[RMDB]
RNA sequence: GGGAACGACUCGAGUAGAGUCGAAAACCCCCAGAUAAGACUGCAGUAUUUUCCUUAUAUGAUCUGGUCCCACCGUGGGCAGCACUGCAUGCCCAGAGCCUGAGAGGAUUAUGAAAACAUGGCAAGGAUGCUCAAUACCAUUCGUGGUAUUGAGCAUAAAAGAAACAACAACAACAAC
Reactivity to DMS in 0.01 (KOAc 150mM, MgCl2 10mM, bicine 150mM(pH8.5), 24C), signal-to-noise 4, nucleotides 027 to 126: c020c020c020c040c050a060g000a060u010a060a070g000a110c090u010g000c010a050g010u000a090u010u010u010u020c020c050u010u030a130u010a080u000g020a040u030c020u010g000g010u000c010c010c030a090c100c110g000u010g000g030g000c010a020g000c080a080c050u010g010c020a140u000g020c010c000c010a070g010a120g000c060c020u010g010a090g010a150g010g000a070u010u010a050u030g000a050a060a100a080c060a030u000g010g020c050a070a100g010g000
Reactivity to 2A3 in 0.01 (KOAc 150mM, MgCl2 10mM, bicine 150mM(pH8.5), 24C), signal-to-noise 6, nucleotides 027 to 126: c010c000c000c010c000a000g040a100u180a120a040g080a080c040u070g010c030a020g050u070a140u030u150u080u100c040c020u200u070a100u040a080u300g150a070u040c020u040g010g040u050c000c000c010a080c030c030g080u070g000g000g000c000a000g000c020a030c080u090g010c040a060u000g000c000c000c000a010g020a010g000c010c050u100g020a100g020a030g110g020a050u070u050a070u240g070a070a040a010a010c030a030u060g000g010c040a030a020g080g010